[RMDB]
RNA sequence: GGGAACGACUCGAGUAGAGUCGAAAAGAACCUAUUGACAAUGUCAUGGGGAUGAUCGGAAUAUUACCUGACAUGACUCCAAGCGCAGAGAUGUCACUGAGAGGAGUGAGAGUUAGUAAGAUGGGAGUAGAUGAAUAUUCCAGCACGGAGAGAGUGGUCCUGUAUUUCCGUUCGCGGAAAUACAGGAAAAAGAAACAACAACAACAAC
Reactivity to 2A3 in 0.01 (KOAc 150mM, MgCl2 10mM, bicine 150mM(pH8.5), 24C), signal-to-noise 2, nucleotides 027 to 156: g030a020a090c020c020u040a090u050u120g010a030c060a110a110u190g010u060c020a030u090g010g000g020g040a030u060g030a070u080c040g050g040a030a050u090a110u130u070a160c020c020u010g060a020c030a010u040g030a020c020u000c020c020a070a050g040c020g000c120a010g000a000g020a050u040g050u070c020a060c060u060g020a010g000a010g100g010a010g000u040g010a040g000a000g030u070u070a000g000u090a070a030g030a080u050g030g020g010a030g030u060a040g030a110u090g020a080a040u110a100u140u000c020c010a000g030c020a020c040g010g000a020g000a000g000a010g020u040g030g040
Reactivity to DMS in 0.01 (KOAc 150mM, MgCl2 10mM, bicine 150mM(pH8.5), 24C), signal-to-noise 1, nucleotides 027 to 156: g000a090a180c000c010u000a140u020u010g060a090c060a130a120u010g020u000c020a080u010g020g040g010g020a120u010g000a050u000c050g000g000a140a050u000a090u010u020a130c010c020u010g000a120c020a080u000g000a100c040u000c000c010a030a090g000c000g070c080a140g000a120g010a120u000g000u000c030a050c060u000g000a130g030a200g010g010a120g020u000g000a090g000a070g040u010u000a070g000u010a050a050g000a160u020g050g040g040a060g010u000a010g020a160u010g000a040a040u000a060u000u010c000c020a110g030c130a080c090g000g040a110g020a080g000a040g060u010g010g000
Source information:
This 207-nucleotide RNA was probed chemically with 2A3 and DMS. The reactions ran in a buffer of 150 mM KOAc, 10 mM MgCl2 and 150 mM bicine (pH 8.5), at 24 C. It was measured as part of the RMDB library OK3TST. For 2A3, 1,285 sequencing reads were counted.